[RMDB]
Source: RMDB library OK2TST, as collected in RNAgym. Structure probing data (2A3) for a 177-nucleotide construct. The RNA was probed in 150 mM KOAc, 10 mM MgCl2 and 150 mM bicine (pH 8.5) at 24 C. For 2A3 the reverse transcriptase was SuperScript II with manganese.
RNA sequence: GGGAACGACUCGAGUAGAGUCGAAAAUAAAACAAAACAAAACAACAUUUUGAGAACAAAGAUGACCAUAACCACUGAAGGGAAUCACAUCUUUUAAGACAAAUUCAUAUUCUUUUAUUUGUUAUGGGGUGUAUAUCCAGUUCGCUGGAUAUACACCAAAAGAAACAACAACAACAAC
Reactivity to 2A3 in 0.01 (KOAc 150mM, MgCl2 10mM, bicine 150mM(pH8.5), 24C), signal-to-noise 1, nucleotides 027 to 126: u010a030a040a000a030c040a000a080a020a000c030a010a170a000a000c030a020a000c010a000u040u000u000u220g080a070g030a060a000c000a000a130a000g050a040u110g000a030c000c030a000u040a000a040c010c030a000c060u130g020a050a020g120g030g040a060a000u080c000a020c010a190u030c050u110u170u100u110a180a040g030a060c030a000a210a000u100u080c010a080u060a180u270u080c010u000u170u040u000a150u070u110u060g030u040u040a000u070g000g050
For 2A3, 651 sequencing reads were counted.